An RNA of 177 nucleotides, treated with DMS and 2A3 and read out base by base. Conditions: 150 mM KOAc, 10 mM MgCl2 and 150 mM bicine (pH 8.5), 24 C. DMS adducts were read by reverse transcription with MarathonRT. The DMS profile rests on 2,330 reads.
RNA sequence: GGGAACGACUCGAGUAGAGUCGAAAAAAGGCUUGAAUUAAUUUAAGAAGAGAGAGAAAACAUGAACUAAUCCUCACCUUUAAAAUUCAAAAUCAAUGGCUCAGAUUUUGGAUGGAGAGGGGAUGGACAUGUUGUGUCGAUUCGUCGACACAACAUGAAAAGAAACAACAACAACAAC
Reactivity to DMS in 0.01 (KOAc 150mM, MgCl2 10mM, bicine 150mM(pH8.5), 24C), signal-to-noise 2, nucleotides 027 to 126: a060a000g030g010c030u020u020g000a100a060u010u030a200a060u010u010u020a050a150g010a100a010g020a100g000a040g000a060g030a040a030a000a080c060a020u020g000a140a080c090u000a060a090u000c000c000u000c060a190c000c000u000u000u010a000a180a100a010u000u010c010a000a020a000a000u000c020a020a040u010g000g010c020u010c030a090g000a020u000u000u000u000g010g000a000u000g000g010a300g010a060g000g010g020g000a070u020g000g000a110
Reactivity to 2A3 in 0.01 (KOAc 150mM, MgCl2 10mM, bicine 150mM(pH8.5), 24C), signal-to-noise 3, nucleotides 027 to 126: a010a000g090g000c030u120u080g060a040a040u170u110a200a070u190u150u110a140a030g060a100a010g010a020g010a000g010a000g000a030a020a070a010c030a020u100g060a110a030c040u070a130a050u040c000c010u060c070a130c000c000u000u080u030a010a040a000a000u020u000c000a000a000a010a010u050c060a000a090u070g100g020c020u060c060a040g010a030u010u000u000u000g000g000a000u000g010g010a010g000a000g010g000g000g000a020u190g010g000a000